[RMDB]
RNA sequence: GGGAACGACUCGAGUAGAGUCGAAAAAUGACGCGGCCGUCUGGUUCGAGGAUAUGACCCCCGCCGAGCUGGAGGUUGUCUUCCCGACUACGGACGCCAAGCUGAACUACCUGUCGCGGACGCAGCGAUCGGGUAGUCUGUUCGCAGACUACCCGAUAAAAGAAACAACAACAACAAC
Reactivity to DMS in 0.01 (KOAc 150mM, MgCl2 10mM, bicine 150mM(pH8.5), 24C), signal-to-noise 3, nucleotides 027 to 126: a100u020g020a120c210g000c050g030g010c060c000g030u000c120u000g010g000u020u030c000g010a100g000g040a040u030a070u010g000a070c050c040c020c010c020g010c080c130g000a130g030c070u010g010g000a060g000g010u000u000g010u000c050u000u000c000c010c000g000a060c130u040a140c040g000g000a070c000g040c000c130a070a070g000c060u000g000a110a040c050u000a080c040c020u000g000u020c000g020c040g020g000a100c100g000c110a130g020c040g000
Reactivity to 2A3 in 0.01 (KOAc 150mM, MgCl2 10mM, bicine 150mM(pH8.5), 24C), signal-to-noise 5, nucleotides 027 to 126: a000u170g040a030c070g000c030g060g000c050c010g140u050c050u060g020g020u070u070c030g040a130g020g020a020u040a070u280g060a050c020c010c000c010c000g010c060c100g100a070g000c050u090g030g020a040g020g010u050u050g010u000c040u030u010c010c000c000g000a020c040u180a030c030g000g050a000c000g000c030c010a030a020g040c050u090g010a020a040c020u070a070c040c040u030g030u070c030g000c020g070g030a070c050g030c090a040g030c020g030

The record gives the reactivity of an RNA of 177 nucleotides to DMS and 2A3. Values cover nucleotides 27 to 126. DMS adducts were read by reverse transcription with MarathonRT. The RNA was probed in 150 mM KOAc, 10 mM MgCl2 and 150 mM bicine (pH 8.5) at 24 C. 2A3 adducts were read by reverse transcription with SuperScript II with manganese. The 2A3 profile rests on 3,648 reads.